[RMDB]
Structure probing data (DMS and 2A3) for a 177-nucleotide construct. For DMS, 2,810 sequencing reads were counted.
RNA sequence: GGGAACGACUCGAGUAGAGUCGAAAACAUUGAAUGACGCGAUGCCGAUGAUUUCUGAACAAGCGAAUCGCGAACGUUUGGACAAACUGCCAACGAUUGGUCGUGUGAAUCAUCCAGUGGAAGAAGCGACGUGCAGGAUAUUCGUAUCCUGCACGUCAAAAGAAACAACAACAACAAC
Reactivity to DMS in 0.01 (KOAc 150mM, MgCl2 10mM, bicine 150mM(pH8.5), 24C), signal-to-noise 2, nucleotides 027 to 126: c080a110u040u000g000a130a090u010g010a070c090g020c000g000a040u010g000c080c020g050a120u000g000a090u000u000u000c010u010g010a020a110c190a090a040g000c070g000a040a040u020c020g020c030g000a070a120c100g000u000u000u000g000g000a100c050a030a030a120c110u030g030c050c000a010a040c080g010a160u000u000g010g020u000c080g020u000g000u020g020a040a030u040c010a030u000c020c000a090g010u050g030g000a060a090g000a050a170g000c190
Reactivity to 2A3 in 0.01 (KOAc 150mM, MgCl2 10mM, bicine 150mM(pH8.5), 24C), signal-to-noise 5, nucleotides 027 to 126: c020a030u060u120g050a070a030u110g000a030c010g020c000g040a030u090g130c060c010g010a030u060g020a040u000u110u150c030u080g100a120a030c010a110a050g010c040g070a040a040u030c030g010c010g070a030a020c010g010u020u090u080g000g000a020c080a110a120a080c190u160g010c010c000a000a040c070g120a180u040u140g080g000u070c040g000u020g020u040g140a100a050u010c000a000u000c000c020a020g020u020g020g060a110a070g040a100a010g110c040
For 2A3 the reverse transcriptase was SuperScript II with manganese.
The data come from the RNA Mapping Database (RMDB), library OK1LIB.